An RNA of 177 nucleotides, treated with DMS and 2A3 and read out base by base.
RNA sequence: GGGAACGACUCGAGUAGAGUCGAAAAUCGAGAGAAUAAAUUCCACUAAAAAGGGUUAAAGAAAAAUCUAUUCACUGAACUUAUUGAUGAAAACUUUAAAUGCGUCAAGUACAUCAAAAGAGGAAACCUUAUGAAAUUCAUUCGUGAAUUUCAUAAGAAAAGAAACAACAACAACAAC
Reactivity to DMS in 0.01 (KOAc 150mM, MgCl2 10mM, bicine 150mM(pH8.5), 24C), signal-to-noise 2, nucleotides 027 to 126: u010c070g020a080g000a200g010a040a070u020a090a160a080u010u020c000c000a080c050u050a010a060a080a140a120g000g010g000u020u040a070a060a180g000a060a110a150a140a010u010c040u000a030u010u000c020a130c060u000g000a110a120c010u000u000a040u000u000g000a010u000g000a100a040a070a030c050u010u000u050a080a070a130u020g000c110g000u010c100a010a020g010u000a070c000a020u010c010a000a000a070a070g010a070g000g000a130a050a090c150
Reactivity to 2A3 in 0.01 (KOAc 150mM, MgCl2 10mM, bicine 150mM(pH8.5), 24C), signal-to-noise 4, nucleotides 027 to 126: u120c020g010a020g030a020g030a160a000u060a050a080a020u140u070c020c000a090c090u130a070a050a060a060a050g080g000g010u080u080a090a130a070g140a100a170a040a000a020u060c060u080a130u030u140c030a020c090u090g070a050a010c000u090u010a080u240u020g010a010u010g030a070a120a090a010c010u050u080u140a130a230a080u250g040c020g050u030c030a030a010g000u020a110c010a020u000c000a000a000a040a020g030a040g010g050a060a020a010c010